[RMDB]
RNA sequence: GGGAACGACUCGAGUAGAGUCGAAAAGAAGAAGCGAAACCUGUCCUGGAAGCGCAGCUGGCCAAGUCGAUCGCCGGCAUCAUGUAAUACCUGCGGCUGCGGCGAUCGUCGCAGCCGUUCUCCUUCCCCUCCCCGACUUUUUCGAAAGUCGGGGAGGAAAAGAAACAACAACAACAAC
Reactivity to 2A3 in 0.01 (KOAc 150mM, MgCl2 10mM, bicine 150mM(pH8.5), 24C), signal-to-noise 1, nucleotides 027 to 126: g170a040a010g030a000a000g020c020g100a000a060a130c000c030u020g060u100c000c000u080g010g020a160a000g010c010g000c050a050g020c030u100g020g080c040c060a160a110g110u100c060g140a160u110c050g000c000c010g020g000c020a060u000c010a010u070g110u140a020a000u010a060c000c000u020g000c000g000g000c070u040g020c040g000g010c070g060a250u300c230g000u000c000g000c000a000g000c000c000g020u000u000c000u000c000c000u040u020c000c000
Source: RMDB library OK1LIB, as collected in RNAgym.
This 177-nucleotide RNA was probed chemically with 2A3.
For 2A3, 465 sequencing reads were counted.
Reactivities are given for positions 27 through 126.
2A3 adducts were read by reverse transcription with SuperScript II with manganese.